[RMDB]
RNA sequence: GGGAACGACUCGAGUAGAGUCGAAAACAGUUGUCUGAUCCUAAUUAUGAUGCCUUGUUGAUUUCUAUGACUAAUCAUAGUUUCAGUGUGCAAAAACACAUUGGCGCUCCAGCAAACUUGCGUGUUGCCUACAUCAAAUCUUCGGAUUUGAUGUAGGAAAAGAAACAACAACAACAAC
Reactivity to 2A3 in 0.01 (KOAc 150mM, MgCl2 10mM, bicine 150mM(pH8.5), 24C), signal-to-noise 2, nucleotides 027 to 126: c030a060g100u110u090g050u150c040u000g030a060u040c030c000u040a070a010u080u080a050u170g130a050u050g050c010c030u060u070g050u070u040g050a170u050u040u020c020u030a100u080g000a050c000u070a110a060u090c010a050u020a060g010u020u000u060c010a030g000u000g030u000g120c030a040a080a000a000a040c030a010c010a050u020u000g000g000c010g030c030u000c020c020a000g000c030a000a070a110c060u050u020g030c020g090u060g060u070u080g040
Reactivity to DMS in 0.01 (KOAc 150mM, MgCl2 10mM, bicine 150mM(pH8.5), 24C), signal-to-noise 2, nucleotides 027 to 126: c060a140g030u000u000g020u020c030u000g000a140u000c010c020u000a070a070u000u000a100u000g000a080u000g010c110c060u000u000g010u000u000g000a080u010u010u000c030u000a030u010g000a110c210u010a100a050u010c030a030u000a010g000u010u000u010c030a070g010u010g000u000g020c050a030a050a010a120a220c040a050c020a040u000u010g010g020c050g010c050u010c070c050a070g000c050a060a070a070c090u000u000g020c060g020u000g000u000u000g010